[RMDB]
RNA sequence: GGGAACGACUCGAGUAGAGUCGAAAACGGCGGUGCGUGGACGGACAGCCCCAAGGGCGGCGAGUAGUUUUCUUGGCUGUUUGGCUGUAAACAUGGGGGCGUCGGGUAGCUGGGAGGUCCGGAACGGCGAUAAAUAAAGAUUCGUCUUUAUUUAUCGAAAAGAAACAACAACAACAAC
Reactivity to DMS in 0.01 (KOAc 150mM, MgCl2 10mM, bicine 150mM(pH8.5), 24C), signal-to-noise 9, nucleotides 027 to 126: c090g010g010c050g010g010u010g010c050g030u010g010g010a110c060g010g000a060c060a100g000c010c020c100c070a100a100g000g000g010c030g010g000c030g000a050g010u000a060g010u010u010u020u020c060u020u020g000g010c030u000g000u010u010u020g000g020c020u000g010u000a050a060a090c120a090u020g010g000g000g000g010c030g010u010c040g000g000g000u010a050g000c070u020g000g010g000a080g000g010u010c020c020g010g000a080a090c090g000g010
Reactivity to 2A3 in 0.01 (KOAc 150mM, MgCl2 10mM, bicine 150mM(pH8.5), 24C), signal-to-noise 5, nucleotides 027 to 126: c010g020g000c010g010g010u030g010c040g010u050g020g050a020c010g020g010a010c020a010g020c000c000c000c020a050a060g060g020g000c000g020g010c010g010a030g020u080a010g000u010u010u060u050c050u060u080g060g000c010u000g040u060u050u100g080g000c000u000g010u010a010a040a020c020a060u060g020g000g000g000g000c000g010u020c000g000g000g000u020a020g000c010u020g000g000g010a030g000g010u000c000c010g000g010a050a020c010g040g010

An RNA of 177 nucleotides, treated with DMS and 2A3 and read out base by base.
The DMS profile rests on 53,105 reads.
Conditions: 150 mM KOAc, 10 mM MgCl2 and 150 mM bicine (pH 8.5), 24 C.
DMS adducts were read by reverse transcription with MarathonRT.
For 2A3, 15,667 sequencing reads were counted.